[RMDB]
Description: Structure probing data (2A3 and DMS) for a 177-nucleotide construct. Values cover nucleotides 27 to 126. Conditions: 150 mM KOAc, 10 mM MgCl2 and 150 mM bicine (pH 8.5), 24 C. The data come from the RNA Mapping Database (RMDB), library OK2TST. For 2A3, 1,226 sequencing reads were counted.
RNA sequence: GGGAACGACUCGAGUAGAGUCGAAAAUUUUGGUGAUACCAAUUCCAUGCUUCCGGGUUAAUUGGCUCACCCACUGAACCCAGUAAACGAAGAGAACUUCUUGAGCUUGAGUUUAGCCAUUGAUCGACGGGUAAUGAUAGUUCGCUAUCAUUACCCGAAAAGAAACAACAACAACAAC
Reactivity to 2A3 in 0.01 (KOAc 150mM, MgCl2 10mM, bicine 150mM(pH8.5), 24C), signal-to-noise 2, nucleotides 027 to 126: u060u080u020u080g050g010u040g020a010u100a270c000c000a010a010u120u060c020c010a080u100g080c100u230u080c060c050g000g050g000u010u140a040a010u020u010g000g000c010u020c010a010c000c040c020a040c020u060g040a040a020c010c000c000a000g010u070a010a090a050c080g040a090a020g070a010g000a140a090c000u030u040c000u100u040g020a030g030c000u040u050g020a010g060u040u000u060a020g020c040c020a050u060u200g050a060u170c020g160a040
Reactivity to DMS in 0.01 (KOAc 150mM, MgCl2 10mM, bicine 150mM(pH8.5), 24C), signal-to-noise 4, nucleotides 027 to 126: u000u000u010u000g000g030u010g010a070u000a210c010c010a020a030u000u000c030c030a090u010g010c110u010u010c120c100g010g000g010u010u010a030a030u000u000g000g000c300u000c030a040c030c010c170a090c080u000g000a070a070c010c010c050a100g000u000a040a100a110c080g000a030a070g010a170g000a100a080c040u010u000c050u000u000g010a180g010c020u000u000g020a090g010u000u000u000a040g020c070c030a100u010u000g010a090u000c090g000a220